The data come from the RNA Mapping Database (RMDB), library OK1LIB. This 177-nucleotide RNA was probed chemically with 2A3. Conditions: 150 mM KOAc, 10 mM MgCl2 and 150 mM bicine (pH 8.5), 24 C.
RNA sequence: GGGAACGACUCGAGUAGAGUCGAAAAGACUGCGUGCACUUGAGACGAUAUCGAGCCGGAAAUUAAUCGAUAAUGUCUCUAGUAGUGGAUACGAUCCGGCAAGUAUCGACUACUUGUGCUCGUAGGAGGCUACGCUAUGAUUCGUCAUAGCGUAGCCAAAAGAAACAACAACAACAAC
Reactivity to 2A3 in 0.01 (KOAc 150mM, MgCl2 10mM, bicine 150mM(pH8.5), 24C), signal-to-noise 3, nucleotides 027 to 126: g110a030c000u000g000c000g010u010g010c000a020c000u000u060g000a000g010a000c010g020a000u010a010u090c010g010a000g000c000c000g000g060a040a120a050u280u300a100a100u090c020g000a030u030a030a120u120g000u010c000u020c020u010a060g020u000a010g000u010g110g010a000u010a040c000g020a040u000c010c010g000g000c030a090a060g000u000a000u000c010g080a010c000u040a050c000u040u070g000u000g000c000u000c000g000u000a000g010g010a030